An RNA of 207 nucleotides, treated with 2A3 and DMS and read out base by base. The DMS profile rests on 1,495 reads. DMS adducts were read by reverse transcription with MarathonRT. The reactions ran in a buffer of 150 mM KOAc, 10 mM MgCl2 and 150 mM bicine (pH 8.5), at 24 C. Values cover nucleotides 27 to 156. In probing experiments dimethyl sulfate is read out at A N1 and C N3, which are open when not base-paired. Reactivities are rounded to 0.1 and cut off at 0 and 3.
RNA sequence: GGGAACGACUCGAGUAGAGUCGAAAAAGUCACUUCGGUGACUAAAAGGAGGGGAACUUCUAUCUGGUGAUAGACGGGAACUCUAAAUUCCUUGAAAUGCCUCGCCGCAUUGGGUUCGAUUCCCUUCCCCUCCGCCAAAAAGGAUUCUUCGGAAUCCCCGUACAGAUUGUUUCGACAAUCUGUACGGAAAAGAAACAACAACAACAAC
Reactivity to 2A3 in 0.01 (KOAc 150mM, MgCl2 10mM, bicine 150mM(pH8.5), 24C), signal-to-noise 2, nucleotides 027 to 156: a010g000u010c000a000c010u060u100c210g080g000u010g000a000c010u030a000a160a020a030g000g000a010g010g000g000g010a010a010c030u020u030c000u000a010u000c000u010g050g030u240g050a000u000a000g000a000c020g000g030g000a000a000c000u020c020u170a070a060a050u020u020c000c000u020u300g020a040a010a000u010g020c010c020u150c180g130c250c100g010c030a000u010u030g020g000g000u010u000c000g000a000u000u000c000c000c050u000u000c000c010c040c010u000c000c000g010c000c010a040a040a020a010a000g000g020a000u020u010c020u060u110c230g080g010a000a000u000c010c000
Reactivity to DMS in 0.01 (KOAc 150mM, MgCl2 10mM, bicine 150mM(pH8.5), 24C), signal-to-noise 2, nucleotides 027 to 156: a020g000u010c000a000c000u000u000c270g020g030u000g010a060c000u000a000a090a150a140g000g000a050g020g000g050g020a020a040c120u000u000c010u000a030u000c000u000g000g040u000g020a020u000a030g010a070c080g070g000g000a010a060c030u000c070u000a190a080a270u000u000c010c010u000u010g020a070a050a020u000g020c020c020u000c300g000c150c060g050c020a030u000u000g000g020g010u000u020c010g020a300u000u000c010c000c010u000u000c020c000c000c010u000c010c020g000c040c000a000a060a020a040a090g010g010a020u000u000c020u000u000c290g060g010a010a030u010c010c000